The data come from the RNA Mapping Database (RMDB), library TTRDES.
Chemical mapping of a 177-nucleotide RNA with DMS.
For DMS the reverse transcriptase was MarathonRT.
[RMDB]
RNA sequence: GGGAACGACUCGAGUAGAGUCGAAAAGAUAUGGAAUCCAUGGACAUGUUCCGUGGUCGGAAACGACCACUGAACAACAGCCAUGUGAUUCCUAAGUCAAACUCUUACCCGUUCGCGGGUAAGAGAACACAGUGGUAUCCUUCGGGAUACCACUGUGAAAAGAAACAACAACAACAAC
Reactivity to DMS in 0.01 (KOAc 150mM, MgCl2 10mM, bicine 150mM(pH8.5), 24C), signal-to-noise 1, nucleotides 027 to 126: g000a010u000a070u010g000g000a010a010u010c010c010a010u000g000g010a010c060a190u000g020u000u000c000c160g000u000g020g030u000c000g010g000a000a040a020c020g030a030c000c000a010c000u000g000a020a000c000a100a040c170a160g010c000c000a050u000g000u000g000a000u010u000c000c000u000a010a030g000u000c010a220a170a300c000u000c000u000u000a020c000c010c000g000u010u000c250g010c000g010g010g020u000a000a000g000a000g000a030a110